[RMDB]
The record gives the reactivity of an RNA of 207 nucleotides to DMS and 2A3. The reactions ran in a buffer of 150 mM KOAc, 10 mM MgCl2 and 150 mM bicine (pH 8.5), at 24 C. Reactivities are given for positions 27 through 156.
RNA sequence: GGGAACGACUCGAGUAGAGUCGAAAAAUCACCGGUGGGGAACCCCAUACGGCAACGGCGUAGAAGCAAAUGCUAACCAAUCCGUGGUAUCUACGCGACGGAGCAUCCACGGAUAACUCUAACAAGGCUAAGCGUCUCGGUUUCGACCGAGACGCAACUGAUUCUUAUUGUUCGCAAUAAGAAUCAGAAAAGAAACAACAACAACAAC
Reactivity to DMS in 0.01 (KOAc 150mM, MgCl2 10mM, bicine 150mM(pH8.5), 24C), signal-to-noise 1, nucleotides 027 to 156: a090u010c040a030c000c020g040g000u000g010g040g020g010a130a140c130c050c030c030a070u000a120c040g090g020c040a050a130c040g000g020c020g060u000a030g030a190a110g000c090a080a090a120u000g010c020u000a040a200c070c090a170a070u010c030c030g030u020g000g000u020a110u000c010u010a000c020g010c040g000a140c070g010g030a100g000c040a140u000c000c060a040c020g050g000a110u000a040a050c100u000c030u020a110a080c030a100a040g020g000c040u000a080a130g000c000g010u000c010u000c000g020g010u010u000u020c240g000a040c000c000g040a010g020a000c040g100c000a000a000
Reactivity to 2A3 in 0.01 (KOAc 150mM, MgCl2 10mM, bicine 150mM(pH8.5), 24C), signal-to-noise 3, nucleotides 027 to 156: a010u070c030a000c000c000g000g020u010g000g020g010g100a100a090c050c000c000c020a030u100a150c010g020g010c040a060a010c040g010g000c000g000u000a000g020a110a020g020c060a060a160a090u200g030c010u100a030a100c040c050a060a010u010c000c000g010u000g000g020u050a040u050c000u020a010c010g010c010g050a040c040g100g030a040g050c000a020u020c000c030a000c000g000g000a000u030a020a030c040u090c040u180a070a070c050a090a050g080g030c040u110a080a100g010c000g010u000c010u000c000g000g030u050u090u070c180g060a040c000c000g000a000g000a000c000g010c000a000a000